Record summary: This 207-nucleotide RNA was probed chemically with DMS and 2A3. DMS adducts were read by reverse transcription with MarathonRT. For 2A3 the reverse transcriptase was SuperScript II with manganese. The 2A3 profile rests on 3,790 reads.
[RMDB]
RNA sequence: GGGAACGACUCGAGUAGAGUCGAAAAAACAGGUAGCCCUGCUCCAUCUCGACGACGGUCUGGGUGACGUCACCUGCCUCGAAACAACGCGCGGCGCCCUGUGUAAGGCUGACCAGCCCUGACGCGACGGCCGACAACUGCUCCGCACGGUCACGGGCCAUACUUAUUCCUUCGGGAAUAAGUAUGGAAAAGAAACAACAACAACAAC
Reactivity to DMS in 0.01 (KOAc 150mM, MgCl2 10mM, bicine 150mM(pH8.5), 24C), signal-to-noise 2, nucleotides 027 to 156: a070a070c040a060g020g020u000a180g000c030c000c020u010g000c010u000c060c040a120u000c010u000c100g020a150c110g020a130c050g000g000u010c020u000g030g010g010u010g020a180c130g030u000c050a050c030c000u000g000c000c010u000c030g000a140a130a100c050a060a090c050g020c080g010c070g030g000c030g000c030c030c040u000g030u000g030u000a080a020g000g020c050u020g010a080c050c070a260g000c000c000c020u000g000a100c040g000c000g040a070c030g020g020c010c000g000a090c130a070a110c030u000g010c010u000c020c000g000c030a100c030g020g000u000c040a100c070g020g020g000
Reactivity to 2A3 in 0.01 (KOAc 150mM, MgCl2 10mM, bicine 150mM(pH8.5), 24C), signal-to-noise 4, nucleotides 027 to 156: a010a000c050a020g000g020u070a020g000c000c020c030u010g030c050u020c040c010a080u030c030u050c130g150a160c070g030a050c050g000g030u050c060u090g020g030g010u030g060a060c070g080u100c020a020c020c010u040g010c030c000u060c020g070a120a120a050c100a050a040c090g030c010g010c010g050g000c010g020c020c030c010u030g000u020g040u100a070a070g020g000c050u030g020a140c030c030a020g000c000c010c030u090g020a050c030g030c010g090a080c040g040g000c020c000g060a070c040a120a060c050u090g030c020u000c010c000g030c010a040c050g020g020u040c040a050c060g000g010g000